[RMDB]
RNA sequence: GGGAACGACUCGAGUAGAGUCGAAAAUAUCGACCUCGAAUGAGGUCGAGAGUCGUGCAAAUAAGAGGCUCGACAGAUGCACGACAAAGCGAGCCUACAGGCGUCGAGGAAAACUCGACGCCAAAAACGUCUUCGUGCAGUUCGCUGCAUGAAGACGAAAAGAAACAACAACAACAAC
Reactivity to 2A3 in 0.01 (KOAc 150mM, MgCl2 10mM, bicine 150mM(pH8.5), 24C), signal-to-noise 2, nucleotides 027 to 126: u100a000u000c000g000a000c000c000u000c020g290a240a290u300g000a000g000g000u000c000g000a000g000a000g000u000c010g000u000g000c010a000a060a000u130a070a030g020a030g060g000c000u000c020g020a020c010a050g090a040u020g020c000a000c020g000a010c030a000a030a000g070c000g000a000g000c000c000u020a030c020a040g000g000c000g000u010c000g000a010g000g030a070a070a070a090c010u000c000g000a000c000g000c000c000a000a000a000a000a000
Reactivity to DMS in 0.01 (KOAc 150mM, MgCl2 10mM, bicine 150mM(pH8.5), 24C), signal-to-noise 2, nucleotides 027 to 126: u030a060u000c000g020a000c030c000u020c000g000a130a080u170g010a000g000g000u010c000g000a020g000a120g030u000c000g000u000g000c000a060a010a090u040a130a080g020a040g000g010c000u010c000g010a110c110a070g000a080u000g010c020a000c010g000a010c000a020a220a060g010c020g000a000g000c000c000u010a060c200a090g000g010c000g040u000c000g000a060g010g000a120a060a080a080c010u010c000g000a000c010g020c000c000a000a030a030a030a050
This 177-nucleotide RNA was probed chemically with 2A3 and DMS. The DMS profile rests on 2,863 reads. For 2A3, 2,612 sequencing reads were counted. DMS adducts were read by reverse transcription with MarathonRT.